This 177-nucleotide RNA was probed chemically with 2A3 and DMS. The 2A3 profile rests on 884 reads. It was measured as part of the RMDB library OK2TST. Conditions: 150 mM KOAc, 10 mM MgCl2 and 150 mM bicine (pH 8.5), 24 C.
[RMDB]
RNA sequence: GGGAACGACUCGAGUAGAGUCGAAAAGAAAUUCUCAGUCCGGGGCUCCACCGUGAACUCGACGUUCAAGAGGUUGAACCUAGUCCUGCGAGAGGAUGACCGAAUCCUCUGGCGUGAGGAGGUCGACUGAGCAGGCAUAGUUCGCUAUGCCUGCUCAAAAAGAAACAACAACAACAAC
Reactivity to 2A3 in 0.01 (KOAc 150mM, MgCl2 10mM, bicine 150mM(pH8.5), 24C), signal-to-noise 1, nucleotides 027 to 126: g030a030a100a040u090u070c020u000c010a020g040u040c020c040g010g000g060g000c080u050c030c000a040c000c040g000u010g020a010a000c010u000c160g170a080c070g030u020u040c050a060a020g140a090g260g000u010u030g030a050a020c010c010u030a060g090u020c000c030u050g030c010g060a010g010a010g030g000a020u060g060a050c090c090g040a070a040u020c000c000u050c000u050g100g000c020g050u130g130a040g000g050a020g000g060u040c030g000a000c030
Reactivity to DMS in 0.01 (KOAc 150mM, MgCl2 10mM, bicine 150mM(pH8.5), 24C), signal-to-noise 2, nucleotides 027 to 126: g020a070a110a200u010u020c000u000c000a070g000u010c020c050g000g010g000g000c030u000c020c070a030c040c040g000u000g000a060a010c020u020c080g020a170c120g010u000u000c020a050a110g020a110g010g010u000u000g020a070a060c020c020u010a240g010u000c010c010u000g010c000g000a010g040a040g000g000a020u000g000a150c250c260g010a120a140u000c000c000u010c010u000g000g000c010g020u000g010a050g000g010a100g000g010u030c040g010a040c040